[RMDB]
RNA sequence: GGGAACGACUCGAGUAGAGUCGAAAAGAUAUGGAAUCAUACGGGACUUGGACCACUACCUCAGUAGGUCGGAAACGACCUACUGAGGUAGUGCUAGUCCUCGUGUAUAAAGAGUGAUUCCUAAGUCGCCUUACAUCUAGUUCGCUAGAUGUAAGGCAAAAGAAACAACAACAACAAC
Reactivity to DMS in 0.01 (KOAc 150mM, MgCl2 10mM, bicine 150mM(pH8.5), 24C), signal-to-noise 1, nucleotides 027 to 126: g000a110u020a300u010g020g000a020a030u000c010a000u010a070c000g030g010g010a010c030u010u000g030g080a160c300c010a020c000u000a000c000c000u010c000a010g030u010a000g000g060u000c000g000g010a100a140a250c000g000a010c000c000u000a000c000u000g000a000g010g050u000a000g010u000g000c030u010a020g020u000c010c000u010c060g020u010g000u020a190u010a070a040a170g000a250g020u020g000a020u020u000c020c010u020a080a240g020u000c050
This 177-nucleotide RNA was probed chemically with DMS. DMS adducts were read by reverse transcription with MarathonRT. The reactions ran in a buffer of 150 mM KOAc, 10 mM MgCl2 and 150 mM bicine (pH 8.5), at 24 C.